Chemical mapping of a 177-nucleotide RNA with DMS and 2A3. For 2A3 the reverse transcriptase was SuperScript II with manganese. Conditions: 150 mM KOAc, 10 mM MgCl2 and 150 mM bicine (pH 8.5), 24 C. DMS adducts were read by reverse transcription with MarathonRT. It was measured as part of the RMDB libraries RFM100 and RFMREP.

RNA sequence: GGGAACGACUCGAGUAGAGUCGAAAAAGCAUUUGCGGCUACAGGCGCAAAGGUCGGGAUUGGAAUAGGGGCUGGCCACGCGUGCGGUGGGGAAGCAAGGGGCUGGCAGGUCAGAGGGCUGCCAGCCGAGGAUUUAUCAAUUCGUUGAUAAAUCCUCAAAAGAAACAACAACAACAAC
Reactivity to DMS in 0.01 (KOAc 150mM, MgCl2 10mM, bicine 150mM(pH8.5), 24C), signal-to-noise 7, nucleotides 027 to 126: a070g010c060a140u000u010u020g010c020g010g000c030u030a120c230a130g000g000c030g010c020a010a040a040g010g010u030c050g010g000g000a130u020u010g000g010a090a100u020a070g010g000g000g010c060u000g010g000c060c040a050c100g000c080g020u010g010c060g000g010u010g000g010g000g010a100a080g000c170a080a070g000g010g000g010c000u000g000g000c000a010g000g010u010c080a130g010a130g010g000g010c000u000g000c000c010a010g000c020c020
Reactivity to 2A3 in 0.01 (KOAc 150mM, MgCl2 10mM, bicine 150mM(pH8.5), 24C), signal-to-noise 9, nucleotides 027 to 126: a000g050c030a070u030u030u070g030c030g030g010c030u120a090c060a200g090g010c020g000c030a030a040a020g020g030u120c030g020g020g040a110u050u110g050g050a090a080u070a170g020g000g020g010c040u040g020g020c020c010a060c060g070c020g040u100g020c030g010g040u120g020g020g010g020a040a010g030c060a070a070g100g010g010g000c000u000g000g000c000a010g010g040u040c020a020g030a080g120g050g020c000u000g000c000c000a000g000c000c000